An RNA of 177 nucleotides, treated with DMS and 2A3 and read out base by base. For 2A3, 1,165 sequencing reads were counted. For DMS, 1,701 sequencing reads were counted.
[RMDB]
RNA sequence: GGGAACGACUCGAGUAGAGUCGAAAAGCGGCACGGGUCGAUCAGAUGGCGCGCCGGGUGCGGCGUCGCGAGUGCGCCCCACGGGUGACCCUUGGAGCAAUUUGUCCAGAACGUCACGCUGCGCGGGGUCACCUACUGGGUUCGCCCAGUAGGUGACAAAAGAAACAACAACAACAAC
Reactivity to DMS in 0.01 (KOAc 150mM, MgCl2 10mM, bicine 150mM(pH8.5), 24C), signal-to-noise 2, nucleotides 027 to 126: g030c030g020g020c040a060c040g000g040g020u010c010g010a070u000c140a120g000a130u000g020g010c030g020c060g010c010c010g020g010g030u000g010c060g020g000c040g040u010c030g000c040g010a160g000u000g000c070g000c180c010c000c050a090c120g000g010g020u010g000a030c000c060c010u030u010g010g000a040g010c070a100a120u000u000u010g010u000c020c070a110g010a070a110c240g000u010c050a030c060g010c030u010g010c040g000c080g010g010g000
Reactivity to 2A3 in 0.01 (KOAc 150mM, MgCl2 10mM, bicine 150mM(pH8.5), 24C), signal-to-noise 1, nucleotides 027 to 126: g060c010g070g040c020a030c070g000g010g080u070c020g030a140u000c000a030g120a200u110g090g000c000g030c020g020c030c000g040g070g050u180g040c010g000g000c010g050u070c030g010c000g030a070g070u130g000c050g000c000c020c000c010a060c060g060g020g010u000g030a030c000c000c000u020u060g030g000a050g010c030a110a120u140u170u300g070u000c000c000a020g060a140a040c050g040u040c020a010c030g070c050u010g000c030g010c000g000g030g030